[RMDB]
RNA sequence: GGGAACGACUCGAGUAGAGUCGAAAACAGGUUGGUUCGUACCCAUUAGACGGUCGGCAGACUUGUACUGAACUGAGUAAUUGUGUAGAUAACUUAACCGAUAAGACUGAUGAGCUAUACUCAUUGUGAUUUUGACAUCUUUCGAGAUGUCAAAAUCAAAAGAAACAACAACAACAAC
Reactivity to DMS in 0.01 (KOAc 150mM, MgCl2 10mM, bicine 150mM(pH8.5), 24C), signal-to-noise 2, nucleotides 027 to 126: c070a040g000g020u000u000g010g000u030u000c210g040u020a030c000c050c060a150u010u020a110g020a140c190g010g000u000c050g020g020c070a150g000a140c060u040u020g010u000a060c060u000g010a080a060c090u000g020a080g010u010a020a070u020u060g000u010g020u030a120g000a070u010a090a050c090u000u010a060a080c050c040g000a060u010a080a000g000a000c020u000g000a000u000g040a030g000c030u000a020u000a050c000u000c000a010u000u010g010u010
Reactivity to 2A3 in 0.01 (KOAc 150mM, MgCl2 10mM, bicine 150mM(pH8.5), 24C), signal-to-noise 8, nucleotides 027 to 126: c020a000g020g020u020u020g010g010u050u070c040g050u080a030c000c000c020a030u030u130a100g050a070c040g020g010u030c020g020g060c010a010g030a140c020u070u110g020u120a080c040u070g030a150a010c010u040g030a020g100u050a060a100u130u080g020u020g030u090a040g050a180u080a100a030c030u090u180a040a040c030c000g100a130u050a230a020g000a000c020u010g020a000u000g000a010g010c010u160a150u010a300c000u000c000a010u000u010g030u030
The data come from the RNA Mapping Database (RMDB), libraries RFM100 and RFMREP. This 177-nucleotide RNA was probed chemically with DMS and 2A3. Reactivities are given for positions 27 through 126. The reactions ran in a buffer of 150 mM KOAc, 10 mM MgCl2 and 150 mM bicine (pH 8.5), at 24 C.